[RMDB]
RNA sequence: GGGAACGACUCGAGUAGAGUCGAAAAUCGGUCUGACGAAAUUAAACAUCUUUUCCUCUAUGGUAUUGACGUAUACUUCUGCCCAGAGGGAGUAUUCACACAAUACGGAUUAUGCAAGGGCUGUCAAAAAUACCCUCAUAUUCGUAUGAGGGUAUUUAAAAGAAACAACAACAACAAC
Reactivity to 2A3 in 0.01 (KOAc 150mM, MgCl2 10mM, bicine 150mM(pH8.5), 24C), signal-to-noise 9, nucleotides 027 to 126: u090c010g010g040u030c030u050g060a070c040g060a050a050a090u170u180a100a140a040c060a070u070c030u050u070u020u030c020c000u040c050u080a120u170g080g010u020a030u020u040g030a040c070g020u020a010u000a040c000u010u010c010u050g060c020c040c040a060g060a120g070g000g000a000g000u000a020u030u080c030a040c010a010c010a090a010u030a030c020g040g010a050u140u120a040u200g060c050a050a050g020g000g000c010u020g050u090c040a060a140
Reactivity to DMS in 0.01 (KOAc 150mM, MgCl2 10mM, bicine 150mM(pH8.5), 24C), signal-to-noise 9, nucleotides 027 to 126: u020c030g000g010u010c030u020g000a090c100g000a060a080a100u030u030a060a090a130c130a070u010c040u000u000u010u000c010c010u000c090u020a080u030g010g010u000a010u010u010g000a210c160g010u010a020u000a020c030u000u010c010u000g000c040c030c060a080g010a130g000g000g000a030g010u000a010u000u010c050a100c100a110c050a020a020u010a030c010g010g010a080u020u010a050u010g010c080a060a080g010g000g010c020u010g000u020c090a030a060